Conditions: 150 mM KOAc, 10 mM MgCl2 and 150 mM bicine (pH 8.5), 24 C. An RNA of 177 nucleotides, treated with 2A3 and read out base by base.
[RMDB]
RNA sequence: GGGAACGACUCGAGUAGAGUCGAAAAUAUGAAAAGGCGAGCCCGCUGGUGCUACGUCUCGCUUUUAGAAUGAAAACAGCUGCACAGGAGGAAGAUGCGCAGCGUAUCAGGCGGGGAAUGUCCUAGCAUGGGACUCGCAUUUCGAUGCGAGUCCCAUAAAAGAAACAACAACAACAAC
Reactivity to 2A3 in 0.01 (KOAc 150mM, MgCl2 10mM, bicine 150mM(pH8.5), 24C), signal-to-noise 1, nucleotides 027 to 126: u190a040u190g110a080a000a010a000g010g000c000g000a030g040c000c090c000g000c000u010g080g000u010g000c070u000a050c000g150u000c040u000c020g000c010u090u050u120u050a220g110a230a020u130g060a110a040a000a000c020a030g000c000u000g050c000a060c140a060g150g150a140g050g030a050a200g000a090u010g010c000g000c050a000g010c020g000u000a050u110c000a000g010g010c000g000g050g000g000a000a150u160g040u130c000c000u060a000g000c000
2A3 adducts were read by reverse transcription with SuperScript II with manganese. It was measured as part of the RMDB library OK1LIB. Reactivities are given for positions 27 through 126.